RNA sequence: GGGAACGACUCGAGUAGAGUCGAAAAGAUAUGGAGAAGCGAUAAGCUGGUAUCGGAAACGAUACCCAGCUUUUGACGCUUACUCCUAAGUCAAAGAGUGUGGGACAGUUCGCUGUCCCACACUCAAGGUUAUAUGUCACUUCGGUGACAUAUAACCAAAAGAAACAACAACAACAAC
Reactivity to 2A3 in 0.01 (KOAc 150mM, MgCl2 10mM, bicine 150mM(pH8.5), 24C), signal-to-noise 2, nucleotides 027 to 126: g010a010u060a030u080g010g000a000g020a020a000g010c030g040a100u030a220a020g000c000u000g000g030u000a010u020c020g000g050a040a080a000c010g000a000u020a000c030c010c000a000g020c000u050u050u000u060g060a020c000g000c000u000u060a230c000u000c000c000u010a070a020g090u030c030a000a170a110g000a000g000u010g000u000g010g000g000a000c000a000g000u100u120c210g080c210u000g000u000c000c000c000a010c000a000c010u000c000a000a000
Reactivity to DMS in 0.01 (KOAc 150mM, MgCl2 10mM, bicine 150mM(pH8.5), 24C), signal-to-noise 3, nucleotides 027 to 126: g010a040u010a300u010g000g010a010g010a060a040g030c000g020a120u010a020a000g010c000u010g000g000u000a010u000c010g010g010a100a070a140c000g000a010u000a000c130c030c060a010g000c000u000u000u010u020g010a210c050g010c010u000u000a100c000u000c000c000u010a020a120g020u000c030a090a080a140g020a000g000u000g000u020g000g010g000a010c000a020g020u000u000c270g030c000u010g020u010c000c000c000a020c020a000c000u000c020a020a030